RNA sequence: GGGAACGACUCGAGUAGAGUCGAAAAGAAUACUUUUAGUACAAGCGAGUACACGCAGUAUAGUGCCACUUGUGUGAGUAUACUUUUAGUAGAGAAGAAUACACGCAGUAAACUGCCACUUGUGUGAAUUUUGGGACUGUUUCGACAGUCCCAAAAUAAAAGAAACAACAACAACAAC
Reactivity to 2A3 in 0.01 (KOAc 150mM, MgCl2 10mM, bicine 150mM(pH8.5), 24C), signal-to-noise 3, nucleotides 027 to 126: g010a030a040u060a030c040u080u100u080u160a100g050u100a000c010a000a000g020c020g040a050g050u010a020c040a020c090g040c050a040g010u090a070u160a150g030u060g000c000c000a020c020u040u020g000u000g000u020g040a010g000u060a020u070a120c030u050u030u030u060a110g070u170a030g020a050g010a250a030g020a070a020u120a060c040a000c010g000c000a010g020u030a000a080a050c000u020g020c010c020a000c030u080u070g010u000g010u020g040a100
Reactivity to DMS in 0.01 (KOAc 150mM, MgCl2 10mM, bicine 150mM(pH8.5), 24C), signal-to-noise 3, nucleotides 027 to 126: g040a140a000u010a000c000u000u020u050u010a110g020u030a000c030a010a060g000c040g010a230g030u010a130c030a160c150g000c040a040g020u010a080u000a060g010u000g010c080c020a010c030u000u040g000u010g010u020g000a020g000u000a030u000a090c010u000u000u000u000a050g020u030a130g010a140g030a130a080g010a150a090u010a120c000a040c020g000c030a010g000u010a030a080a050c050u030g000c040c150a020c070u020u000g000u030g020u000g030a130
Chemical mapping of a 177-nucleotide RNA with 2A3 and DMS. For 2A3, 1,139 sequencing reads were counted. For DMS, 3,251 sequencing reads were counted. 2A3 adducts were read by reverse transcription with SuperScript II with manganese.